[RMDB]
RNA sequence: GGGAACGACUCGAGUAGAGUCGAAAAUGGCCUGGCUCGACGGUGAUCAGCUCGGCCGACGCGUGCAUCGGGUUGCCUGCGACUACCAGGCGGUGCGCACCCACUUCUUCGACGAGUACUUCGGUGCGUGUCCAGAGUGUUUCGACACUCUGGACACAAAAGAAACAACAACAACAAC
Reactivity to 2A3 in 0.01 (KOAc 150mM, MgCl2 10mM, bicine 150mM(pH8.5), 24C), signal-to-noise 2, nucleotides 027 to 126: u120g050g010c000c000u030g030g040c010u060c100g060a080c040g130g260u240g070a220u090c010a000g000c000u010c030g010g020c000c000g000a030c060g010c040g020u070g010c010a030u010c070g120g000g000u030u080g010c000c000u020g010c040g070a110c010u080a080c000c130a020g000g060c000g010g010u050g000c020g000c000a020c000c000c000a050c020u050u060c010u050u040c000g070a080c010g000a030g030u020a110c000u090u030c020g030g030u050g050c010
Reactivity to DMS in 0.01 (KOAc 150mM, MgCl2 10mM, bicine 150mM(pH8.5), 24C), signal-to-noise 1, nucleotides 027 to 126: u040g010g030c060c020u030g010g010c000u000c060g010a050c080g100g060u060g010a090u030c000a060g000c110u030c300g030g000c070c000g060a040c050g010c030g000u010g000c000a000u000c080g000g000g020u000u000g000c000c040u000g010c060g000a110c070u060a120c300c060a000g000g000c030g010g000u000g000c020g010c110a140c010c000c060a090c000u030u010c160u000u060c180g000a060c020g000a050g000u000a060c120u040u000c140g050g000u000g000c070